An RNA of 207 nucleotides, treated with 2A3 and read out base by base.
For 2A3, 779 sequencing reads were counted.
For 2A3 the reverse transcriptase was SuperScript II with manganese.
It was measured as part of the RMDB library OK3TST.
RNA sequence: GGGAACGACUCGAGUAGAGUCGAAAAUUUGCGCCGAUGUUUACGAUAUCGUGCUUAAUGAUGUCAUCAACGGCGUUAUUUAUAAAUCGGCAUGCCGCAAAUAUGACGCAUACGGUAGGAUUAUACAAUUACACGAAUUAGCUUACAUGCAACUACCGCCCUUAUGCUAGUUCGCUAGCAUAAGGGCAAAAGAAACAACAACAACAAC
Reactivity to 2A3 in 0.01 (KOAc 150mM, MgCl2 10mM, bicine 150mM(pH8.5), 24C), signal-to-noise 1, nucleotides 027 to 156: u050u020u080g000c000g010c000c030g030a040u020g100u140u080u070a080c080g000a050u010a020u170c060g000u070g120c190u020u040a110a020u080g020a010u000g010u060c040a110u000c030a020a140c050g000g000c000g000u000u000a000u000u040u020a180u020a000a050a050u020c050g100g000c050a020u080g060c000c000g080c090a060a000a110u120a050u040g010a020c020g030c130a000u020a050c070g000g010u020a000g020g130a050u070u110a150u110a080c080a000a080u170u190a050c060a030c160g180a120a100u040u000a110g000c000u070u080a000c010a190u110g050c000a010a020c000u000a000c010c060